[RMDB]
RNA sequence: GGGAACGACUCGAGUAGAGUCGAAAACAAUCAACAAUAUGGUUUGUGUACUUAUGCUGAAAAUCGUUGAGGUUGUAUGGAAUAGGUUAACCGUAAGACCUUAAGUUGAAAAACUUUAAAAUUAAUCAAAAUCAUGUACACUUCGGUGUACAUGAAAGUAACUCACUAAGUUCGCUUAGUGAGUUACAAAAGAAACAACAACAACAAC
Reactivity to DMS in 0.01 (KOAc 150mM, MgCl2 10mM, bicine 150mM(pH8.5), 24C), signal-to-noise 1, nucleotides 027 to 156: c030a130a170u030c010a020a070c060a150a190u010a070u000g030g000u000u000u000g030u000g100u000a090c050u000u010a020u010g100c040u000g000a090a100a050a020u000c060g070u000u000g070a140g000g000u000u000g000u000a060u010g030g000a140a160u000a040g000g010u020u000a140a150c000c090g030u000a130a150g010a050c030c030u000u010a060a050g010u020u000g080a140a100a140a080a040c010u000u000u000a040a010a050a100u000u000a030a150u010c020a060a050a100a220u010c000a010u000g000u000a020c010a010c000u010u000c300g030g000u010g000u000a000c000a000u000g010a000a000a080
Reactivity to 2A3 in 0.01 (KOAc 150mM, MgCl2 10mM, bicine 150mM(pH8.5), 24C), signal-to-noise 4, nucleotides 027 to 156: c030a010a070u080c020a040a080c030a090a080u110a060u180g010g040u040u030u050g070u040g030u040a040c020u140u090a070u170g020c050u090g070a070a030a020a040u080c040g010u040u040g000a030g010g050u020u000g030u040a160u080g070g050a090a070u030a080g020g010u040u080a060a040c040c000g060u070a070a040g020a010c010c000u000u020a020a000g000u040u000g000a120a050a010a000a000c020u070u120u110a070a090a110a130u180u180a110a070u090c020a070a060a000a090u030c000a000u000g000u000a000c000a010c000u010u030c170g050g000u000g000u010a000c000a000u000g000a000a000a000